The record gives the reactivity of an RNA of 177 nucleotides to DMS. For DMS, 1,585 sequencing reads were counted. The RNA was probed in 150 mM KOAc, 10 mM MgCl2 and 150 mM bicine (pH 8.5) at 24 C. The data come from the RNA Mapping Database (RMDB), library M2PK50. DMS adducts were read by reverse transcription with MarathonRT.
RNA sequence: GGGAACGACUCGAGUAGAGUCGAAAAGGUCUGAUCUUCGGAUCAGACCAACUCUGAUUCCCAAAAGCUGCGUAUCUUGGCUAAGACGGAUAGGCGUUGCCACUCAGGGGGGUUUCGACCCCCCUAAUUGUAGUACACACUUCGGUGUGUACUACAAAAAAGAAACAACAACAACAAC
Reactivity to DMS in 0.01 (KOAc 150mM, MgCl2 10mM, bicine 150mM(pH8.5), 24C), signal-to-noise 2, nucleotides 027 to 126: g000g000u000c000u000g000a020u000c000u010u030c190g040g010a030u000c000a010g030a010c000c010a000a040c100u000c110u020g010a220u000u000c010c000c020a090a050a090a110g000c070u000g000c050g050u000a040u000c030u000u000g050g030c080u000a120a110g000a140c110g000g000a110u000a030g000g010c010g000u000u000g020c010c100a100c220u000c110a030g000g000g030g010g000g000u000u000u010c130g010a030c000c000c000c000c000c000u000a010a000